[RMDB]
RNA sequence: GGGAACGACUCGAGUAGAGUCGAAAAUCAUUGAGAUGCUGGGCGCUAUGGUCGUCCUCCUCCGGCUGACCUCCUUCUCAGCUGCUGACCGGCGCCGCACAGGCAGCAUCUCAGCUUCGUGUGCAAAAAAAGAAUGGUCGGUUCGCCGACCAUUCAACCAAACAUACAUCUUCGGAUGUAUGUUUGGAAAAGAAACAACAACAACAAC
Reactivity to 2A3 in 0.01 (KOAc 150mM, MgCl2 10mM, bicine 150mM(pH8.5), 24C), signal-to-noise 3, nucleotides 027 to 156: u110c020a060u040u080g010a000g000a000u020g010c000u050g010g010g030c010g000c060u070a150u300g020g000u000c010g070u050c030c060u040c000c020u050c020c000g020g000c000u010g010a020c040c050u120c030c040u270u090c030u010c020a020g000c010u020g020c070u080g010a000c010c010g010g000c020g020c030c020g010c020a050c010a020g200g000c010a000g010c000a000u000c010u000c000a010g000c010u160u210c100g080u100g060u060g150c090a120a120a000a000a000a040a010g000a000a000u000g000g000u000c010g010g020u020u020c160g020c050c000g000a000c010c000a000u000u000c000a010a000
Reactivity to DMS in 0.01 (KOAc 150mM, MgCl2 10mM, bicine 150mM(pH8.5), 24C), signal-to-noise 2, nucleotides 027 to 156: u020c080a110u000u010g020a040g020a020u010g030c010u000g010g020g020c010g030c000u000a030u010g100g010u000c010g000u010c030c050u000c040c020u000c020c010g010g030c010u010g000a030c070c070u000c150c120u000u000c090u000c010a020g020c030u010g030c050u010g010a030c010c030g000g020c010g010c010c030g020c070a110c130a160g010g010c010a010g000c000a040u000c010u010c000a020g000c120u000u000c120g020u010g010u000g000c020a000a000a100a090a100a180a220g010a030a030u000g010g020u010c010g020g000u010u000c300g030c030c000g000a010c010c000a000u000u000c000a090a150
An RNA of 207 nucleotides, treated with 2A3 and DMS and read out base by base. The 2A3 profile rests on 2,043 reads.